Conditions: 150 mM KOAc, 10 mM MgCl2 and 150 mM bicine (pH 8.5), 24 C. An RNA of 207 nucleotides, treated with DMS and 2A3 and read out base by base. The DMS profile rests on 3,497 reads. DMS adducts were read by reverse transcription with MarathonRT.
[RMDB]
RNA sequence: GGGAACGACUCGAGUAGAGUCGAAAAAAGCGCAACUUGAACUUUCAGCGGCGCUCUCAAAGGUAUCAAAGGAAGUAUCAAAAGCAUCCGGUGAAUUCGUCACCUUUGGCGAUCGUCUUUUUGCUUCAUUGUCAGGAGCUAACGUCAGCGUUAAAUCCCUGAUCCUAAAAUUCGUUUUAGGAUCAGGAAAAGAAACAACAACAACAAC
Reactivity to DMS in 0.01 (KOAc 150mM, MgCl2 10mM, bicine 150mM(pH8.5), 24C), signal-to-noise 2, nucleotides 027 to 156: a080a040g020c020g020c010a060a080c040u000u010g050a060a220c070u000u010u000c020a050g020c070g030g030c010g050c010u000c010u000c010a090a060a130g020g050u000a070u010c090a040a100a150g040g000a080a070g010u000a050u000c040a060a100a080a120g010c040a050u000c050c030g000g040u000g040a070a130u000u000c070g000u010c040a030c110c080u010u000u010g040g030c030g020a040u000c040g010u000c000u000u000u000u000u000g020c000u000u000c060a130u000u000g020u020c040a170g010g030a160g040c030u000a030a050c030g020u000c070a070g020c070g020u000u000a060a080a180u000c030
Reactivity to 2A3 in 0.01 (KOAc 150mM, MgCl2 10mM, bicine 150mM(pH8.5), 24C), signal-to-noise 3, nucleotides 027 to 156: a010a000g030c040g000c030a040a040c050u120u140g030a080a030c030u090u230u150c110a030g010c050g040g000c010g000c000u000c000u010c010a070a080a000g030g010u060a030u160c060a060a020a040g040g020a040a000g030u060a060u180c060a090a070a010a050g020c010a030u000c030c030g000g020u040g050a090a130u170u130c050g030u020c060a050c030c000u050u070u090g030g010c050g010a020u030c030g040u070c000u040u100u020u090u090g010c000u040u030c020a070u030u170g050u080c050a040g000g040a030g010c010u030a030a010c020g050u040c050a030g030c020g020u060u130a050a060a070u080c020